An RNA of 170 nucleotides, treated with DMS and 2A3 and read out base by base. The data come from the RNA Mapping Database (RMDB), library 15KLIB. For DMS the reverse transcriptase was MarathonRT. For 2A3 the reverse transcriptase was SuperScript II with manganese. The RNA was probed in 150 mM KOAc, 10 mM MgCl2 and 150 mM bicine (pH 8.5) at 24 C.
RNA sequence: GGGAACGACUCGAGUAGAGUCGAAAAGACACGUAAAGUGAAGUUACUAUUUAGGGCUUCAUUUUAUUUCAAAGAAUUUGCUACCCGCACUUUCACUGCUACCACUGCUGUAGGUAGUUGUAUAAAGACAACACGUCCUUCGGGACGUGUAAAAGAAACAACAACAACAAC
Reactivity to DMS in 0.01 (KOAc 150mM, MgCl2 10mM, bicine 150mM(pH8.5), 24C), signal-to-noise 2, nucleotides 027 to 129: g110a110c300a050c210g010u000a000a000a070g000u000g020a030a000g000u020u000a150c050u020a200u060u070u010a050g010g080g000c010u000u000c030a030u000u040u020u000a030u020u050u000c120a140a130a110g000a000a000u000u000u000g020c040u000a170c040c010c030g050c030a050c030u000u020u000c050a070c050u030g000c020u000a040c000c000a080c070u060g000c170u110g030u010a110g070g000u020a040g010u010u020g010u000a000u050a020a060a080g040a120c090a000
Reactivity to 2A3 in 0.01 (KOAc 150mM, MgCl2 10mM, bicine 150mM(pH8.5), 24C), signal-to-noise 6, nucleotides 027 to 129: g020a010c030a010c120g020u010a010a010a020g010u000g010a000a000g020u040u060a300c060u150a250u160u300u300a010g030g010g000c000u000u000c010a000u000u000u000u000a020u020u200u040c110a110a090a020g100a080a100u100u060u140g000c000u040a030c000c010c040g010c000a000c000u000u010u020c020a010c030u000g000c020u010a000c000c010a050c050u180g040c050u170g150u090a110g060g000u000a010g020u000u000g050u040a090u030a030a050a000g160a040c020a020